[RMDB]
RNA sequence: GGGAACGACUCGAGUAGAGUCGAAAAAUAGGUAAAGAAGCGGUAGAAAACAGCAUUUAUAGACAAGCAGAGCAAAUAAGAGGAGACCUAAUCAUAUUACAAGGUACAGAUGAUGACUGGUUACAUGUAAUCUGGCAUCAUUCGUGAUGCCAGAUUAAAAAGAAACAACAACAACAAC
Reactivity to DMS in 0.01 (KOAc 150mM, MgCl2 10mM, bicine 150mM(pH8.5), 24C), signal-to-noise 1, nucleotides 027 to 126: a070u010a030g010g000u000a030a060a130g030a090a050g020c080g030g000u000a070g030a070a110a080a120c060a060g010c070a030u000u000u010a080u010a080g000a120c090a020a050g010c070a110g000a070g070c100a020a040a040u010a030a070g000a050g010g000a110g030a150c070c050u000a050a070u010c020a050u010a100u000u030a090c140a150a050g010g010u010a030c090a010g010a070u010g010a050u000g030a070c030u000g000g000u000u010a030c230a040u000g010